Overview
The record gives the reactivity of an RNA of 177 nucleotides to 2A3. For 2A3, 733 sequencing reads were counted. Reactivities are rounded to 0.1 and cut off at 0 and 3. The data come from the RNA Mapping Database (RMDB), library OK1LIB.
[RMDB]
RNA sequence: GGGAACGACUCGAGUAGAGUCGAAAACUCGAAAGAGACCUGCAUAUCUUAGGCAGAUGAUCAAGUCGCGUCUGAAAAGCGAAAGCCCUAAGAUAUGCAGCUGUGAGGACUUGACGCAGAAAAUAAACGGCUCAGCAUAUUUCGAUAUGCUGAGCCGAAAAGAAACAACAACAACAAC
Reactivity to 2A3 in 0.01 (KOAc 150mM, MgCl2 10mM, bicine 150mM(pH8.5), 24C), signal-to-noise 1, nucleotides 027 to 126: c050u000c000g010a010a020a000g060a040g000a050c010c010u000g010c000a000u010a000u000c030u000u000a000g000g020c000a000g000a000u000g000a000u160c000a010a010g010u000c030g000c000g010u000c020u000g040a190a240a060a000g000c010g030a040a070a070g020c000c000c000u000a000a000g000a000u000a010u000g010c000a000g000c020u000g000u020g000a040g000g130a040c000u000u000g000a010c000g000c000a000g130a090a140a060a090u230a040a070a000